[RMDB]
RNA sequence: GGGAACGACUCGAGUAGAGUCGAAAACACACCGAGUGUCCAGACUGCGGGUCUUCGGAUGCCAAUGGUGUUUACUCAGACGGACACAUGUACUGCUUUGCGUGUGACCCGUCAGUCGCUUGGAAGACGCUGUUAUAGCUUUCGAGCUAUAACAGCGAAAAGAAACAACAACAACAAC
Reactivity to 2A3 in 0.01 (KOAc 150mM, MgCl2 10mM, bicine 150mM(pH8.5), 24C), signal-to-noise 7, nucleotides 027 to 126: c080a000c000a010c000c010g030a070g050u040g030u020c020c010a000g000a010c010u090g080c190g150g250g010u010c000u110u130c110g000g020a010u020g020c010c020a090a070u240g030g000u010g000u010u030u030a100c060u060c060a050g020a030c020g040g000a010c000a000c010a000u010g040u090a100c130u120g230c060u190u160u160g050c010g000u020g000u020g030a100c010c010c000g000u000c000a000g020u010c030g020c120u040u090g050g050a070a040g080a030
Reactivity to DMS in 0.01 (KOAc 150mM, MgCl2 10mM, bicine 150mM(pH8.5), 24C), signal-to-noise 2, nucleotides 027 to 126: c270a020c020a070c050c030g000a070g000u020g000u000c020c000a070g020a010c010u010g050c210g000g050g000u000c000u010u070c100g010g010a030u000g000c000c140a110a110u060g020g000u010g000u010u010u010a070c030u000c090a090g020a010c000g020g000a250c010a000c000a050u000g020u010a020c300u020g020c150u000u020u000g000c010g030u000g020u010g000a100c060c000c000g030u000c030a050g010u000c050g000c110u000u000g010g000a110a090g000a100
Description
The record gives the reactivity of an RNA of 177 nucleotides to 2A3 and DMS. 2A3 is a SHAPE reagent: it acylates the 2'-hydroxyl of flexible nucleotides of all four kinds. It was measured as part of the RMDB library OK1LIB. For 2A3 the reverse transcriptase was SuperScript II with manganese.